[RMDB]
RNA sequence: GGGAACGACUCGAGUAGAGUCGAAAAAACAAUACCAUAGUGAAAGAAGGAGAAAUAGGUUUUAAGACAGUCAAGCCAAAUCCUUUUUAGUGAUCCCUAGCAGCUUGACAUUUAUUUUGCUGAUUAACGUAUAGUGAAGUUUCGACUUCACUAUACGAAAAGAAACAACAACAACAAC
Reactivity to DMS in 0.01 (KOAc 150mM, MgCl2 10mM, bicine 150mM(pH8.5), 24C), signal-to-noise 6, nucleotides 027 to 126: a040a030c100a080a070u000a120c090c050a080u010a090g010u000g000a100a060a060g010a030a030g000g010a080g010a040a080a070u010a110g010g000u000u010u010u010a060a090g020a080c170a070g020u000c030a010a040g000c000c040a040a080a080u000c010c010u010u010u010u000u000a120g010u010g020a080u000c010c020c010u010a100g020c110a070g000c000u000u000g000a020c030a110u000u010u010a070u010u000u000u000g010c050u000g010a120u010u010a060a170
Reactivity to 2A3 in 0.01 (KOAc 150mM, MgCl2 10mM, bicine 150mM(pH8.5), 24C), signal-to-noise 4, nucleotides 027 to 126: a010a010c110a050a030u110a080c030c020a090u130a080g140u100g090a130a060a070g020a030a010g050g030a040g100a030a130a050u180a100g050g020u070u080u110u130a090a030g080a040c040a030g020u040c050a020a000g000c010c010a040a040a060u020c000c010u020u040u000u040u070a090g020u060g080a050u030c000c010c000u000a030g020c050a000g000c020u050u050g010a000c010a000u030u110u020a100u020u140u070u080g040c030u020g060a140u120u060a070a050